[RMDB]
RNA sequence: GGGAACGACUCGAGUAGAGUCGAAAACUUUUCUGAAGCUGGCAUAGACAUACCUUGGUUACAAACUAAAACUGAUGUAAGUAGACCCUGGAUUCAACCUGACUUUCAGUCAGUCCAUCCUUGGACCACUGCACAAAGAAUUCGUUCUUUGUGCAGUAAAAGAAACAACAACAACAAC
Reactivity to DMS in 0.01 (KOAc 150mM, MgCl2 10mM, bicine 150mM(pH8.5), 24C), signal-to-noise 4, nucleotides 027 to 126: c050u000u000u000u010c020u010g010a100a110g020c050u010g010g000c030a080u000a080g000a080c110a080u000a070c060c030u010u010g010g000u000u000a080c110a060a150a070c070u000a040a040a050a150c140u010g010a120u000g000u010a060a120g010u000a080g000a070c040c030c020u000g010g000a100u000u000c110a110a080c130c030u000g000a040c030u000u010u010c140a060g010u000c050a030g000u000c090c100a040u000c080c090u010u000g000g010a120c110c140
Reactivity to 2A3 in 0.01 (KOAc 150mM, MgCl2 10mM, bicine 150mM(pH8.5), 24C), signal-to-noise 4, nucleotides 027 to 126: c000u110u030u070u000c030u040g080a030a020g000c020u030g040g000c040a080u080a110g050a080c030a040u120a160c000c000u040u040g050g000u060u060a050c060a080a200a070c060u130a120a070a120a060c050u070g050a070u080g100u070a060a070g020u010a030g060a060c010c000c030u020g040g000a070u100u080c020a040a010c020c010u010g070a100c000u110u250u080c060a020g000u000c000a000g000u000c010c000a030u040c040c000u030u060g020g010a010c020c010
The record gives the reactivity of an RNA of 177 nucleotides to DMS and 2A3. It was measured as part of the RMDB library OK2TRN. The DMS profile rests on 2,901 reads. 2A3 adducts were read by reverse transcription with SuperScript II with manganese. The RNA was probed in 150 mM KOAc, 10 mM MgCl2 and 150 mM bicine (pH 8.5) at 24 C.